[RMDB]
RNA sequence: GGGAACGACUCGAGUAGAGUCGAAAACAAAAGGUAAAAGCGUCAACUACAAUGAACAAGAAUUUUACGACGACUUCGAGGACGAAGAAGAGGAAGUAGAAGAACAGGUCGAAGAGGAAUAUGAGCCUAUUAUUGAUUUCGUUUUAAAUCACCGAAAUAUUACCUCAGUGUUCGCACUGAGGUAAUAAAAAGAAACAACAACAACAAC
Reactivity to 2A3 in 0.01 (KOAc 150mM, MgCl2 10mM, bicine 150mM(pH8.5), 24C), signal-to-noise 5, nucleotides 027 to 156: c030a000a080a030a010g070g010u120a060a070a010a000g040c020g030u030c020a090a040c050u160a050c100a110a130u140g040a060a040c070a060a050g140a120a060u050u060u140u190a060c040g010a000c000g020a030c020u060u050c050g000a020g030g000a050c030g030a030a080g030a020a010g010a020g040g000a020a020g020u070a030g010a070a010g000a020a020c040a030g000g060u040c040g010a060a030g020a020g040g030a020a030u100a080u120g010a010g010c010c010u050a060u220u030a080u050u110g050a060u050u060u070c040g020u030u040u020u180a020a090a020u080c020a020c040c020g030a040a070a010
Reactivity to DMS in 0.01 (KOAc 150mM, MgCl2 10mM, bicine 150mM(pH8.5), 24C), signal-to-noise 3, nucleotides 027 to 156: c080a060a040a070a080g020g020u000a080a080a080a080g020c070g020u000c020a080a110c060u000a140c110a090a110u000g010a070a170c100a080a150g020a060a100u000u000u000u000a100c040g020a090c000g010a090c070u000u000c030g010a090g020g000a090c100g010a070a080g020a040a050g000a080g020g000a040a060g030u000a060g010a050a040g010a030a060c040a070g010g040u000c050g000a070a030g020a050g040g000a070a060u010a070u000g010a130g040c020c020u000a110u000u010a040u000u000g000a080u000u000u000c030g020u040u000u000u000a030a070a100u010c080a140c150c040g010a040a050a210